[RMDB]
Overview:
The record gives the reactivity of an RNA of 207 nucleotides to 2A3.
RNA sequence: GGGAACGACUCGAGUAGAGUCGAAAAUUACAUGUGCUGUGUGCUCUUUUUAGUCCUAGAGAUGUAGUGGUAAAAUGUGUAAGUUUCUGUUCUUAAGGAGUUUAAGUGUAUUGGAAGAGACAUAAUAAACAUAUACUUUUAGGUGGUUAUAAUGGUACCAGUGGGGUAAUUUCGAUUACCCCACUGGAAAAGAAACAACAACAACAAC
Reactivity to 2A3 in 0.01 (KOAc 150mM, MgCl2 10mM, bicine 150mM(pH8.5), 24C), signal-to-noise 1, nucleotides 027 to 156: u060u020a090c040a040u060g060u050g060c040u010g010u000g040u050g040c000u020c000u000u140u000u100u120a050g010u020c020c000u000a030g020a010g000a040u020g030u040a070g000u040g020g000u050a000a000a050a220u060g000u000g010u070a110a140g000u040u000u060c010u020g070u030u020c000u040u090a000a140g030g000a090g080u020u010u020a100a070g020u130g030u000a020u040u070g040g010a020a020g040a010g050a020c030a000u150a020a060u020a020a090a000c000a000u110a020u040a090c020u090u090u150u060a040g000g000u040g000g080u060u000a060u030a100a080u060g000g000u040a030
For 2A3, 469 sequencing reads were counted.